[RMDB]
RNA sequence: GGGAACGACUCGAGUAGAGUCGAAAAGCGCGCGAGAGGCGGGACUAGUCUUGGCCGUCGUCUUCCAGGACGGCGCGAACGGAGUCGGGGUGCAUACCGUGGUUCCACGGAGGAACGCUCCGCGCAGCGAGGCUUAUUCUUUCGAGAAUAAGCCUCGAAAAGAAACAACAACAACAAC
Reactivity to 2A3 in 0.01 (KOAc 150mM, MgCl2 10mM, bicine 150mM(pH8.5), 24C), signal-to-noise 4, nucleotides 027 to 126: g020c010g000c000g000c030g010a140g010a040g160g050c020g000g000g020a010c010u020a020g070u040c030u080u130g130g010c050c000g000u000c000g000u000c020u220u090c080c030a030g090g000a000c010g010g000c010g000c020g020a060a030c060g020g030a020g020u040c000g000g020g030g040u060g060c050a070u120a160c020c040g300u020g000g020u100u020c050c000a020c020g060g020a040g030g010a050a020c010g010c010u000c000c000g000c010g000c010a000g070
Reactivity to DMS in 0.01 (KOAc 150mM, MgCl2 10mM, bicine 150mM(pH8.5), 24C), signal-to-noise 6, nucleotides 027 to 126: g010c070g010c020g000c020g010a100g000a090g020g020c020g000g010g010a170c040u000a070g010u010c070u010u010g010g020c060c010g010u000c010g000u000c030u000u000c180c220a180g000g000a020c010g010g000c010g010c060g010a060a100c100g000g000a040g000u000c020g000g000g020g010u000g010c170a140u010a050c010c000g010u000g010g010u000u000c080c010a100c040g010g000a100g000g000a220a180c030g010c000u000c000c010g020c020g020c030a120g010